Chemical mapping of a 207-nucleotide RNA with DMS and 2A3. The data come from the RNA Mapping Database (RMDB), library OK3TST. For DMS the reverse transcriptase was MarathonRT. The 2A3 profile rests on 9,046 reads.
RNA sequence: GGGAACGACUCGAGUAGAGUCGAAAAGCUUUGAUGCAGAGUGGCUACUGGGGUGGCAGUGUGGAAGCGGACAUACUGUCACGUGCACUUAACACAACUAUCAUACUGUGGACAGUUGAUAUAUCAGGCAGAGUUGAGAUUGCAUACAAGUAUGGCAGAAAGUCAUACAUUUCGAUGUAUGACUUUCAAAAGAAACAACAACAACAAC
Reactivity to DMS in 0.01 (KOAc 150mM, MgCl2 10mM, bicine 150mM(pH8.5), 24C), signal-to-noise 4, nucleotides 027 to 156: g020c040u010u000u010g010a110u020g010c010a080g010a110g010u000g010g020c020u000a050c040u000g000g080g000g020u000g010g030c010a030g020u000g070u000g010g020a090a140g030c100g030g000a180c030a010u000a030c030u020g020u000c030a030c030g020u000g030c050a080c080u000u000a070a070c050a120c020a050a050c060u000a050u000c020a080u010a100c120u010g020u010g030g010a070c030a030g020u000u000g000a070u000a090u000a120u010c060a060g030g010c080a060g010a120g010u000u000g010a110g010a090u000u000g020c000a100u010a090c070a070a080g000u010a040u000g020g020c090a250
Reactivity to 2A3 in 0.01 (KOAc 150mM, MgCl2 10mM, bicine 150mM(pH8.5), 24C), signal-to-noise 6, nucleotides 027 to 156: g020c020u080u100u120g040a050u090g010c030a010g030a020g060u070g020g040c030u060a030c040u100g000g020g050g000u010g010g000c010a000g000u020g000u010g030g050a090a020g060c040g050g030a000c010a010u030a000c000u010g000u020c020a010c030g020u030g010c030a030c050u070u110a130a010c040a000c010a090a120c050u070a050u090c020a040u060a140c040u050g020u110g120g080a070c020a040g000u010u020g030a010u020a020u020a020u130c060a020g110g000c040a020g030a010g080u020u030g020a030g010a090u010u100g000c000a010u020a130c010a070a010g030u030a080u060g040g000c020a030